[RMDB]
RNA sequence: GGGAACGACUCGAGUAGAGUCGAAAAGUUGCUCUGCUGUGCCUGUGGCCUCGGGGCAAAGAGAAAGUGGCGAUUUCUACACUCAGUGCUCGGGAACCAGUGGGCACUGAGAAUGGUUUAUGGCCUGGUAACAUAAUUCGUUCGCGAAUUAUGUUACAAAAGAAACAACAACAACAAC
Reactivity to DMS in 0.01 (KOAc 150mM, MgCl2 10mM, bicine 150mM(pH8.5), 24C), signal-to-noise 9, nucleotides 027 to 126: g010u000u010g000c010u000c010u000g000c260u000g010u040g020c010c010u020g010u040g020g020c010c010u000c010g000g000g000g000c020a010a030a070g000a070g000a030a050a050g000u010g010g000c020g010a230u000u010u000c010u000a160c190a120c010u000c000a010g010u000g010c000u000c010g020g010g010a140a170c180c180a130g010u030g010g000g000c000a000c000u000g010a010g000a040a060u010g000g010u000u010u010a080u010g010g010c010c000u010g010
Reactivity to 2A3 in 0.01 (KOAc 150mM, MgCl2 10mM, bicine 150mM(pH8.5), 24C), signal-to-noise 9, nucleotides 027 to 126: g060u030u020g000c000u010c010u020g100c090u050g100u190g070c020c040u260g110u260g070g010c000c000u010c010g000g000g000g000c020a000a040a000g050a000g010a000a040a000g030u030g010g000c020g010a030u000u040u000c010u020a020c030a000c050u000c000a000g010u000g000c000u010c020g050g050g100a140a130c070c010a090g070u210g040g000g000c000a000c000u000g000a010g010a010a030u040g010g040u050u120u070a090u120g090g000c010c010u010g070
An RNA of 177 nucleotides, treated with DMS and 2A3 and read out base by base. The reactions ran in a buffer of 150 mM KOAc, 10 mM MgCl2 and 150 mM bicine (pH 8.5), at 24 C. 2A3 adducts were read by reverse transcription with SuperScript II with manganese. It was measured as part of the RMDB libraries RFM100 and RFMREP.